RNA sequence: GGGAACGACUCGAGUAGAGUCGAAAAUCACUGUGACUGCGCGUGUUAAUUAUUAUUGCCCCACAAUUCGGACGUCACCAAUUGUUGAGUUUAAUCGCAUUCCAGGUUACCAGUUGACCAGUCAGGGCACUUCGUCACUCUUCGGAGUGACGAAGUGAAAAGAAACAACAACAACAAC
Reactivity to DMS in 0.01 (KOAc 150mM, MgCl2 10mM, bicine 150mM(pH8.5), 24C), signal-to-noise 1, nucleotides 027 to 126: u010c070a090c070u000g000u000g010a050c030u000g030c090g020c110g010u020g000u000u020a100a060u020u010a110u000u010a100u020u000g000c050c010c030c110a070c040a070a120u010u000c140g030g030a090c240g030u020c080a060c060c050a030a080u000u000g020u000u000g020a110g030u020u000u000a040a080u000c120g010c030a090u000u020c040c100a070g000g010u000u000a080c070c040a060g000u000u000g060a070c070c020a040g000u000c050a050g000g000g000